RNA sequence: GGGAACGACUCGAGUAGAGUCGAAAACCCCAGCAAAUGAUAAUAAAAUUGCAACAUUUAUUGGGGGCUCGCUGUGGGGGAUGGGGGUAUUUUAUCGACAAUACGAGCGUUGUCGCGAUCAACAAAAAUCAUAUACGGAGUUCGCUCCGUAUAUGAUAAAAGAAACAACAACAACAAC
Reactivity to 2A3 in 0.01 (KOAc 150mM, MgCl2 10mM, bicine 150mM(pH8.5), 24C), signal-to-noise 6, nucleotides 027 to 126: c000c010c000c000a030g040c020a010a100a090u120g120a050u120a210a070u160a060a180a060a100u130u150g060c080a080a060c020a140u080u100u090a110u100u040g010g000g000g050g000c010u050c040g070c050u060g010u190g080g060g000g000g000a030u080g060g000g000g000g030u020a030u020u120u030u080a140u110c010g010a000c010a010a000u030a070c030g020a020g000c010g000u020u010g090u040c010g000c050g090a100u120c080a020a070c010a040a130a080a020
Reactivity to DMS in 0.01 (KOAc 150mM, MgCl2 10mM, bicine 150mM(pH8.5), 24C), signal-to-noise 3, nucleotides 027 to 126: c050c000c000c100a080g000c060a030a040a040u000g020a090u030a080a080u040a060a100a070a170u010u060g020c100a100a150c050a040u010u020u010a050u000u020g020g000g000g040g000c050u020c060g010c130u010g000u020g000g010g010g000g030a050u030g000g010g000g000g030u020a000u000u020u020u050a060u020c010g010a060c050a020a080u020a040c050g020a050g000c090g000u000u000g000u010c010g000c170g000a070u040c090a040a090c160a020a060a080a050